[RMDB]
RNA sequence: GGGAACGACUCGAGUAGAGUCGAAAACGAUACUGCAUUGAUCGCCCGUAGACUAUAGCAGCGUCGCAUGGUCGAUGCUUGUAGUCUAAAUUAGUGUUCGACCAUGAUACUAAGGCGAUCAAUGCAAGGUACAGCAUGAUUUCGAUCGUGUUGUACCAAAAGAAACAACAACAACAAC
Reactivity to DMS in 0.01 (KOAc 150mM, MgCl2 10mM, bicine 150mM(pH8.5), 24C), signal-to-noise 9, nucleotides 027 to 126: c070g010a120u070a080c140u000g010c010a000u000u000g000a000u000c000g000c000c000c300g010u010a030g000a010c010u010a030u020a050g040c210a040g000c030g030u000c010g000c030a220u030g010g010u040c000g010a010u000g010c000u010u000g000u010a020g010u010c040u010a010a020a280u020u000a010g010u000g000u010u010c050g010a100c220c160a090u030g000a050u010a010c020u010a050a100g000g010c000g000a010u000c000a000a000u000g000c010a000a000
Reactivity to 2A3 in 0.01 (KOAc 150mM, MgCl2 10mM, bicine 150mM(pH8.5), 24C), signal-to-noise 9, nucleotides 027 to 126: c020g000a020u040a060c020u020g000c000a000u000u000g000a000u000c000g000c000c000c000g010u020a010g010a010c010u010a010u040a100g190c110a010g010c020g020u000c000g000c070a190u240g130g030u280c000g000a000u010g000c000u010u040g030u030a030g030u010c020u040a020a020a030u050u030a010g010u010g110u040u050c040g060a130c080c060a120u240g000a000u010a020c020u040a050a040g000g000c000g000a000u000c000a000a000u000g000c000a000a000